An RNA of 177 nucleotides, treated with DMS and 2A3 and read out base by base.
Values cover nucleotides 27 to 126.
The 2A3 profile rests on 695 reads.
The DMS profile rests on 866 reads.
It was measured as part of the RMDB library OK2TRN.
[RMDB]
RNA sequence: GGGAACGACUCGAGUAGAGUCGAAAAGAAGUGUUCUGUGUAUUGCAAGAUUGGACGACUGGACUCACCAUACGUUAUAAUGAAUCUAAUGGUCAUCUAAAUUUAGUGAAUGAAGAGUUCCUAACCGCCGUGAGGUAGGGUUCGCCCUACCUCACGGAAAAGAAACAACAACAACAAC
Reactivity to DMS in 0.01 (KOAc 150mM, MgCl2 10mM, bicine 150mM(pH8.5), 24C), signal-to-noise 1, nucleotides 027 to 126: g040a070a060g010u020g000u000u000c050u010g010u010g070u000a080u010u000g020c100a040a020g010a060u000u020g020g000a090c070g000a060c040u020g020g010a040c010u000c080a060c090c040a040u000a110c210g000u010u000a090u030a080a120u000g000a060a010u010c030u030a070a070u000g000g000u000c000a010u070c060u010a010a050a090u030u000u000a110g030u020g020a060a080u000g000a030a060g010a250g010u000u000c010c000u030a030a090c150c240g030
Reactivity to 2A3 in 0.01 (KOAc 150mM, MgCl2 10mM, bicine 150mM(pH8.5), 24C), signal-to-noise 1, nucleotides 027 to 126: g060a170a010g080u000g030u130u000c020u040g150u020g000u110a120u080u180g030c060a050a040g030a150u150u020g040g000a020c020g000a000c020u030g040g040a040c020u050c030a070c040c000a020u060a080c020g000u000u100a150u030a130a190u110g190a070a030u000c020u110a140a070u090g080g050u040c050a000u000c070u070a110a130a110u120u230u160a070g020u070g130a040a030u040g050a000a100g020a010g030u060u020c020c020u060a070a060c080c050g060